[RMDB]
RNA sequence: GGGAACGACUCGAGUAGAGUCGAAAACUAUUUAUAGACAGAGCGGUGGUUAACGUAUAUCGCGGGCAACCUCGAGCACGUAUUCUUCCGGUGGUACGAUUCCACUUGGGCGGGGCAUAAGCAGAAAGGAUUGUUUAGGAUUCGUCUUGAGCAAUCCAAAAGAAACAACAACAACAAC
Reactivity to 2A3 in 0.01 (KOAc 150mM, MgCl2 10mM, bicine 150mM(pH8.5), 24C), signal-to-noise 9, nucleotides 027 to 126: c010u030a090u090u200u080a240u100a060g090a040c080a010g080a010g040c030g030g000u050g010g040u070u110a050a010c010g020u030a050u030a020u160c050g000c010g010g010g010c030a040a050c000c010u030c020g020a020g020c040a010c070g030u050a110u100u060c030u090u020c010c010g020g010u020g010g010u070a070c080g040a060u100u010c000c000a000c000u070u100g030g000g000c030g000g010g000g000c020a060u050a160a030g050c050a010g130a080a100a010
Reactivity to DMS in 0.01 (KOAc 150mM, MgCl2 10mM, bicine 150mM(pH8.5), 24C), signal-to-noise 9, nucleotides 027 to 126: c030u010a060u030u020u030a090u030a080g010a080c110a080g010a160g020c020g000g020u000g010g010u010u010a060a070c090g010u020a070u030a070u010c040g020c120g010g000g000c110a070a100c050c020u000c040g000a060g000c090a060c040g010u010a090u020u010c050u000u010c040c030g000g010u000g000g010u010a060c170g000a160u030u020c020c010a020c040u000u020g010g000g010c050g000g000g010g000c060a060u010a060a080g010c090a070g000a070a110a110